[RMDB]
RNA sequence: GGGAACGACUCGAGUAGAGUCGAAAAGGGCUGAGCACUUUUGGCAGUUUAUACGAACCGGUAAGUAUAUACUGCUUGGAUACGAACCGGUAAGUAUCCAUGCUUCGGCAUCUUGUGCUCUGCCCAAGGGAAGUUGAUCCUUCGGGAUCGGCUUCCCAAAAGAAACAACAACAACAAC
Reactivity to DMS in 0.01 (KOAc 150mM, MgCl2 10mM, bicine 150mM(pH8.5), 24C), signal-to-noise 5, nucleotides 027 to 126: g000g010g010c010u000g000a010g010c000a020c010u000u010u010u010g010g000c050a030g000u010u000u010a010u000a010c000g000a200a150c020c020g010g000u000a090a300g000u000a010u000a010u030a060c020u000g000c020u010u010g000g010a020u010a010c010g000a200a150c020c010g000g000u000a080a260g000u010a010u000c050c020a030u000g000c000u000u040c140g000g020c010a010u010c070u010u000g000u000g000c010u000c000u000g020c010c010c000a030a050
Reactivity to 2A3 in 0.01 (KOAc 150mM, MgCl2 10mM, bicine 150mM(pH8.5), 24C), signal-to-noise 9, nucleotides 027 to 126: g000g000g000c020u030g000a000g000c000a010c010u020u030u070u050g010g000c000a010g000u030u040u030a010u000a000c020g030a120a060c020c000g030g020u080a090a020g000u000a010u000a000u010a020c010u020g030c010u020u050g000g000a000u000a010c010g010a090a070c020c000g010g010u010a020a010g000u000a000u000c010c000a010u010g000c000u040u050c160g090g000c000a010u010c040u040u050g000u000g000c000u000c010u030g000c000c000c000a000a000